[RMDB]
RNA sequence: GGGAACGACUCGAGUAGAGUCGAAAAAAUGUUGAAUGAUACCAAGAACGUCGUUCGCGGCCUUGUGCCGUUUCGCGGCGAUGGUCUUGGCGAUGCUGUCGCCGACUUCCAGGGUUUCGGCCGUCCGGACCGUCUUUAGAUUCGUCUAAAGACGGUCAAAAGAAACAACAACAACAAC
Reactivity to DMS in 0.01 (KOAc 150mM, MgCl2 10mM, bicine 150mM(pH8.5), 24C), signal-to-noise 3, nucleotides 027 to 126: a070a050u000g010u010u000g010a120a090u000g020a160u000a100c030c010a030a000g000a030a050c020g020u000c000g000u000u020c090g030c000g010g010c020c020u000u010g010u000g030c020c040g010u000u010u010c170g010c070g010g000c010g010a010u000g000g000u000c010u010u000g000g010c060g020a100u000g040c090u000g000u000c080g010c030c000g000a070c110u000u000c050c070a110g010g000g010u000u000u000c040g010g020c030c090g000u000c060c090g010
Reactivity to 2A3 in 0.01 (KOAc 150mM, MgCl2 10mM, bicine 150mM(pH8.5), 24C), signal-to-noise 1, nucleotides 027 to 126: a000a020u300g030u130u120g070a030a110u080g030a030u090a120c030c000a000a040g020a060a010c020g000u010c030g040u170u170c010g050c000g060g000c000c020u130u280g070u300g070c000c000g000u030u040u040c040g000c050g000g050c020g020a040u030g040g000u050c030u040u010g000g020c000g050a100u060g050c070u030g000u050c050g000c050c020g020a000c020u060u040c060c020a110g100g010g020u000u000u150c010g020g060c040c020g010u010c060c000g040